Structure probing data (DMS and 2A3) for a 177-nucleotide construct. For 2A3, 845 sequencing reads were counted. It was measured as part of the RMDB library OK2TST. Reactivities are given for positions 27 through 126. For DMS the reverse transcriptase was MarathonRT.
RNA sequence: GGGAACGACUCGAGUAGAGUCGAAAAUUGGAGAAUCGCGCUCGGCUUCUUCCUCUGUGCUGAGUCAUGAAAGUUGCCGGAGCAGGUGCAGUUACACAACCUCCAGGUAACAUCACAUGAUCGUUCAGUCCUUGCUUACGUUCGCGUAAGCAAGGACAAAAGAAACAACAACAACAAC
Reactivity to DMS in 0.01 (KOAc 150mM, MgCl2 10mM, bicine 150mM(pH8.5), 24C), signal-to-noise 1, nucleotides 027 to 126: u000u010g040g000a040g000a120a060u000c080g030c080g010c030u000c100g010g010c030u000u000c040u010u000c010c030u000c070u000g000u010g040c030u000g000a140g000u000c030a050u000g000a070a160a150g010u000u000g010c040c040g040g000a000g010c150a190g000g010u000g080c030a040g000u000u000a090c030a010c070a090a160c300c000u000c010c050a200g030g000u000a000a010c000a060u000c140a150c000a030u030g010a070u000c080g010u000u000c000a140
Reactivity to 2A3 in 0.01 (KOAc 150mM, MgCl2 10mM, bicine 150mM(pH8.5), 24C), signal-to-noise 1, nucleotides 027 to 126: u100u050g010g010a050g010a050a050u100c040g000c030g010c100u010c010g100g000c020u050u030c000u030u040c020c000u000c020u070g070u020g040c040u080g050a040g050u020c000a020u010g100a090a070a000g020u010u000g020c050c020g020g010a000g050c060a020g220g000u040g010c080a080g060u200u210a040c030a000c000a030a130c010c000u030c000c010a020g010g020u020a050a030c010a000u060c010a000c000a050u050g030a050u100c030g040u050u070c040a010